RNA sequence: GGGAACGACUCGAGUAGAGUCGAAAAUGGUAAAGGUUUGCCCUAAAUCAUGGCUCGUGGCACACUGCAAUGCCUGCCCAUCGGGCAUAAUGCUUUCCACCGUUCAGGUAUUUUGUGCUCCGGCAAAAGGCUACCGAUAAUUCGUUAUCGGUAGCCUAAAAGAAACAACAACAACAAC
Reactivity to DMS in 0.01 (KOAc 150mM, MgCl2 10mM, bicine 150mM(pH8.5), 24C), signal-to-noise 1, nucleotides 027 to 126: u000g010g000u000a050a090a140g030g000u000u000u000g020c030c010c010u050a100a110a080u020c120a110u010g010g000c000u000c050g010u000g030g000c020a020c040a060c300u030g020c080a050a110u000g000c000c000u000g000c080c020c000a050u000c110g000g000g000c000a070u020a040a080u000g010c130u010u000u010c080c060a040c000c020g040u000u000c050a060g010g020u010a010u000u000u010u030g010u000g000c000u000c130c040g020g010c100a020a040a080
Reactivity to 2A3 in 0.01 (KOAc 150mM, MgCl2 10mM, bicine 150mM(pH8.5), 24C), signal-to-noise 1, nucleotides 027 to 126: u090g030g010u040a040a000a210g040g000u010u040u110g010c000c000c010u040a070a070a060u190c050a090u140g110g000c020u040c150g030u070g000g060c010a030c010a000c050u100g060c060a080a050u040g010c000c000u000g030c010c010c000a010u080c020g030g010g000c020a010u120a030a070u150g080c010u110u220u000c060c020a020c010c020g000u060u060c020a020g030g000u040a060u060u080u050u060g050u030g000c030u030c010c000g030g000c060a070a080a030